[RMDB]
RNA sequence: GGGAACGACUCGAGUAGAGUCGAAAACUGGCGUCGUCCGGCUCCCUCGACCGCACCGGAGCGCUAGAAAAGGUCCUCGGACUUUCUUCUAUCUCCGAAGCCGGUUUGAGGCCCGGCGAAACGCGGGCUUUGUCAAUGAGUUCGCUCAUUGACAAAGAAAAGAAACAACAACAACAAC
Reactivity to 2A3 in 0.01 (KOAc 150mM, MgCl2 10mM, bicine 150mM(pH8.5), 24C), signal-to-noise 1, nucleotides 027 to 126: c010u000g090g010c000g020u020c000g050u080c030c000g030g030c060u250c050c000c000u000c010g020a000c020c000g030c000a060c160c000g000g000a010g000c060g020c040u000a000g020a000a010a030a000g020g000u020c030c000u060c190g120g000a010c000u060u040u010c070u060u000c030u080a300u300c010u060c030c020g000a010a000g060c100c030g010g050u010u050u300g000a000g000g000c030c000c010g000g060c010g000a040a030a010c010g000c000g000g000g010
Reactivity to DMS in 0.01 (KOAc 150mM, MgCl2 10mM, bicine 150mM(pH8.5), 24C), signal-to-noise 1, nucleotides 027 to 126: c010u000g010g030c000g040u000c030g000u010c030c000g010g000c020u010c100c010c000u000c000g010a030c010c020g020c020a260c240c010g010g010a000g000c040g000c010u000a010g020a010a010a060a020g000g000u000c020c010u020c300g010g010a010c000u000u000u000c130u000u000c040u000a010u010c000u000c000c010g010a180a190g000c270c040g010g000u000u000u020g010a040g000g000c300c000c000g000g000c000g000a040a030a020c020g010c020g000g000g010
Chemical mapping of a 177-nucleotide RNA with 2A3 and DMS. The reactions ran in a buffer of 150 mM KOAc, 10 mM MgCl2 and 150 mM bicine (pH 8.5), at 24 C. For 2A3 the reverse transcriptase was SuperScript II with manganese. The 2A3 profile rests on 1,358 reads.